[RMDB]
Chemical mapping of a 177-nucleotide RNA with 2A3 and DMS. Reactivities are rounded to 0.1 and cut off at 0 and 3. For 2A3, 1,789 sequencing reads were counted. DMS adducts were read by reverse transcription with MarathonRT. 2A3 adducts were read by reverse transcription with SuperScript II with manganese. Source: RMDB library TTRDEL, as collected in RNAgym. The DMS profile rests on 914 reads. Conditions: 150 mM KOAc, 10 mM MgCl2 and 150 mM bicine (pH 8.5), 24 C.
RNA sequence: GGGAACGACUCGAGUAGAGUCGAAAAGAUAUGGACGGGGCAAGGCUCCAGUCGGAAACGACUGAGCUGAUGACCCACCGUCCUAAGUCAAAACCUCAUGGCAGCGCUUCGGCGCUGCCAUGAGGAAGAUAAAUCACCAGUUCGCUGGUGAUUUAUCAAAAGAAACAACAACAACAAC
Reactivity to 2A3 in 0.01 (KOAc 150mM, MgCl2 10mM, bicine 150mM(pH8.5), 24C), signal-to-noise 1, nucleotides 027 to 126: g010a030u080a000u170g000g000a000c000g060g000g020g060c030a030a050g010g000c030u020c210c070a020g000u000c020g000g000a150a100a020c020g010a000c020u000g010a000g000c010u000g060a150u290g000a080c000c010c000a050c020c050g000u010c000c000u010a140a000g010u030c030a000a000a150a280c020c000u030c000a010u000g060g130c050a060g040c040g020c080u240u300c300g100g020c050g000c000u020g000c030c010a020u000g000a020g000g030a000a000
Reactivity to DMS in 0.01 (KOAc 150mM, MgCl2 10mM, bicine 150mM(pH8.5), 24C), signal-to-noise 1, nucleotides 027 to 126: g020a090u020a300u010g000g030a010c030g010g030g010g060c060a120a300g000g000c000u000c150c080a010g000u000c000g000g000a110a160a180c000g010a000c000u000g000a020g010c000u000g000a080u000g010a200c130c010c020a110c180c040g020u000c000c010u000a000a050g000u000c050a140a050a030a100c030c000u030c000a030u010g000g040c020a010g140c000g040c010u010u000c130g010g050c050g100c000u000g010c010c000a000u010g000a010g010g020a000a000